Chemical mapping of a 207-nucleotide RNA with DMS and 2A3. Conditions: 150 mM KOAc, 10 mM MgCl2 and 150 mM bicine (pH 8.5), 24 C. For DMS the reverse transcriptase was MarathonRT. Reactivities are given for positions 27 through 156. For DMS, 7,245 sequencing reads were counted.
RNA sequence: GGGAACGACUCGAGUAGAGUCGAAAACUGGCAGUUCGCUAUUCAUUAUUCGUUUCAUCCAAGACAUUAUGCUACAGUCAUGAAUAACUUAUCCGAACUAACUGCUUCUGGAGGCAAGGUAUUAAUUACUACCAUGGAUGGAGACAAAUUAUCAAAAACAGUUAAAUCAGUUCGCUGAUUUAACUGUAAAAGAAACAACAACAACAAC
Reactivity to DMS in 0.01 (KOAc 150mM, MgCl2 10mM, bicine 150mM(pH8.5), 24C), signal-to-noise 4, nucleotides 027 to 156: c050u000g010g020c060a080g020u000u000c080g050c040u000a060u000u010c040a070u010u000a090u010u000c040g030u010u000u000c010a080u020c040c030a060a100g030a090c090a140u000u000a070u010g000c020u010a030c030a040g020u000c050a080u000g010a050a030u000a030a080c070u010u000a130u000c090c060g020a060a090c090u000a040a070c040u000g010c020u000u010c060u000g030g020a190g020g000c030a060a040g020g000u000a060u000u010a070a140u010u000a100c030u000a030c020c010a210u000g000g020a060u010g050g010a140g010a090c040a060a030a060u020u000a100u000c070a070a040a120a120
Reactivity to 2A3 in 0.01 (KOAc 150mM, MgCl2 10mM, bicine 150mM(pH8.5), 24C), signal-to-noise 5, nucleotides 027 to 156: c040u020g050g000c000a030g020u060u070c040g030c080u110a110u110u080c070a070u040u160a070u100u090c070g040u010u030u050c020a020u010c040c010a060a030g080a060c060a070u090u170a070u210g030c030u070a060c030a050g020u040c020a050u040g050a030a050u100a060a030c050u080u120a030u070c050c020g030a020a010c000u040a060a020c020u040g010c020u050u020c040u100g030g030a050g030g000c050a040a040g040g000u030a020u070u080a140a050u060u050a030c030u010a020c000c030a020u040g000g010a010u020g010g010a010g010a010c010a000a090a040u180u150a110u190c070a070a020a060a010